[RMDB]
RNA sequence: GGGAACGACUCGAGUAGAGUCGAAAAUCAGAGGAAAGGGUUAAGUAGAGAUGUUGAGGCAGACAAGGAUUUGCAGUUACAGGAAGCCAAUGCAGAAAGUAUUGGAAAGUAAUUUUUUAAAUAUAUGUGUUGGGCUGGGUGAGGUGCCUCACACCUACCCAGCGCAUUAUUUCGAUAAUGCGCUGGGAAAAGAAACAACAACAACAAC
Reactivity to 2A3 in 0.01 (KOAc 150mM, MgCl2 10mM, bicine 150mM(pH8.5), 24C), signal-to-noise 1, nucleotides 027 to 156: u080c010a040g020a000g010g040a040a040a030g050g080g000u080u110a140a030g010u140a020g020a000g000a090u030g060u040u040g010a030g000g020c000a010g050a100c020a070a000g000g000a000u030u020u130g050c000a010g010u050u100a010c000a000g040g000a000a000g070c040c000a000a010u050g000c030a030g190a140a300a030g040u000a030u060u060g000g000a080a090a040g050u080a130a090u130u000u000u000u170u300a070a120a030u260a020u120a140u150g000u030g080u010u030g010g010g000c020u020g000g000g000u080g010a040g020g010u040g000c000c000u010c020a030c000a060c000c000u000a010